Structure probing data (2A3 and DMS) for a 177-nucleotide construct. 2A3 adducts were read by reverse transcription with SuperScript II with manganese. The RNA was probed in 150 mM KOAc, 10 mM MgCl2 and 150 mM bicine (pH 8.5) at 24 C.
RNA sequence: GGGAACGACUCGAGUAGAGUCGAAAAGUCAGGAGUUCGAGACCAGCCUGGACAACAUGGGGAAACCCCGUCUCUACUAAAAAUGUAAAAAUUAGCUGGACACGGUGGUGUGUGCCUGUAGUCCAGCCGUCUUUAAGUACUUCGGUACUUAAAGACGAAAAGAAACAACAACAACAAC
Reactivity to 2A3 in 0.01 (KOAc 150mM, MgCl2 10mM, bicine 150mM(pH8.5), 24C), signal-to-noise 2, nucleotides 027 to 126: g090u060c010a000g080g000a050g050u130u100c060g030a030g000a090c040c000a000g060c010c000u020g010g010a010c010a100a010c020a130u140g000g010g010g030a030a080a020c000c000c000c000g000u030c000u000c010u030a050c010u080a070a020a070a080a090u160g050u170a070a080a020a100a070u130u130a020g000c000u000g030g000a000c010a000c030g060g020u140g070g070u160g030u060g090u130g110c020c040u090g000u060a080g020u030c010c000a000g000c000
Reactivity to DMS in 0.01 (KOAc 150mM, MgCl2 10mM, bicine 150mM(pH8.5), 24C), signal-to-noise 4, nucleotides 027 to 126: g010u000c020a070g000g000a070g010u000u010c070g000a080g010a080c040c020a080g010c050c010u000g000g010a050c050a050a060c040a050u000g010g020g010g010a040a110a090c020c010c010c040g010u000c040u000c010u000a060c050u010a010a030a040a080a050u000g010u000a010a040a060a070a060u020u010a070g020c010u000g000g000a020c020a030c050g000g020u000g000g010u000g000u000g000u000g010c030c020u000g020u000a080g010u000c000c010a030g000c030

For 2A3, 1,775 sequencing reads were counted.